[RMDB]
RNA sequence: GGGAACGACUCGAGUAGAGUCGAAAACUUCAUGGCCGACGAGUACGUCUACGGCGUGCGCUCCCGCUGCAAUGUCGGCUUCGGCUUCUGGCAACUGGCGGCGAUGUCCACCGAAGAACUGAACCAGGUCAACUUCGAGAAAGUUUACGACGCCAUGACACUAAGCUUAUUUCGAUAAGCUUAGUGUAAAAGAAACAACAACAACAAC
Reactivity to 2A3 in 0.01 (KOAc 150mM, MgCl2 10mM, bicine 150mM(pH8.5), 24C), signal-to-noise 6, nucleotides 027 to 156: c040u110u070c030a100u080g040g000c020c010g050a070c040g040a050g060u080a030c030g030u000c050u090a060c110g030g010c030g010u060g010c050g020c020u080c010c050c020g010c040u060g010c050a060a150u120g020u040c020g010g000c000u020u010c010g020g000c000u050u030c040u160g030g020c050a120a090c100u050g030g000c010g000g020c050g060a060u070g060u040c020c010a030c020c030g010a030a020g010a070a030c030u070g020a050a040c070c050a090g000g050u030c040a080a070c060u010u020c020g080a120g060a130a110a010g030u060u060u080a070c050g010a000c000g000c010c010a020u050g020
Reactivity to DMS in 0.01 (KOAc 150mM, MgCl2 10mM, bicine 150mM(pH8.5), 24C), signal-to-noise 3, nucleotides 027 to 156: c060u000u010c030a100u000g020g020c030c020g010a090c020g030a120g020u010a040c050g040u000c020u000a080c130g020g020c020g020u010g020c050g010c070u000c030c000c020g060c030u000g000c040a090a100u000g030u000c020g020g020c030u000u000c080g020g030c030u000u000c050u010g030g020c030a090a120c090u010g020g000c010g000g010c000g000a150u000g000u010c040c040a130c010c010g010a050a040g000a110a090c020u000g020a090a180c140c120a230g000g020u000c020a080a060c020u000u000c020g000a150g000a070a050a080g020u010u010u000a060c030g010a070c040g010c000c000a050u010g000